[RMDB]
This 177-nucleotide RNA was probed chemically with 2A3 and DMS.
RNA sequence: GGGAACGACUCGAGUAGAGUCGAAAAGGUAGGGCAUUCGUGCCCUACCACACCUCUAAGCAGAUUGGCGAGGACGACGUCGCGGCCCACGUAUACCAACAACUACUCUCUCCUUCGGGAGAGAGAAGUCUCAAUCACGAUUCGUCGUGAUUGAGACAAAAGAAACAACAACAACAAC
Reactivity to 2A3 in 0.01 (KOAc 150mM, MgCl2 10mM, bicine 150mM(pH8.5), 24C), signal-to-noise 3, nucleotides 027 to 126: g000g000u010a000g010g000g000c030a010u030u060c170g100u030g010c010c010c000u000a000c000c010a010c010a000c000c010u000c030u070a080a050g030c030a030g030a300u140u220g080g030c010g040a050g050g040a050c030g000a030c050g040u060c040g020c050g080g040c010c020c010a050c030g040u070a050u070a190c040c010a020a090c020a040a010c030u120a070c010u010c010u000c000u020c010c000u040u060c220g070g010g000a000g000a000g010a000g010a010a010
Reactivity to DMS in 0.01 (KOAc 150mM, MgCl2 10mM, bicine 150mM(pH8.5), 24C), signal-to-noise 2, nucleotides 027 to 126: g000g000u010a000g010g010g030c000a040u000u030c230g020u000g050c010c000c000u010a000c000c000a030c160a040c070c030u000c060u000a100a200g060c080a070g010a070u000u010g000g010c050g040a130g000g010a140c090g000a060c130g030u010c020g020c040g000g020c050c030c030a080c120g000u010a040u000a150c080c050a090a010c120a040a070c030u000a210c020u000c010u000c000u000c000c000u020u030c150g000g010g000a010g000a020g000a010g000a060a080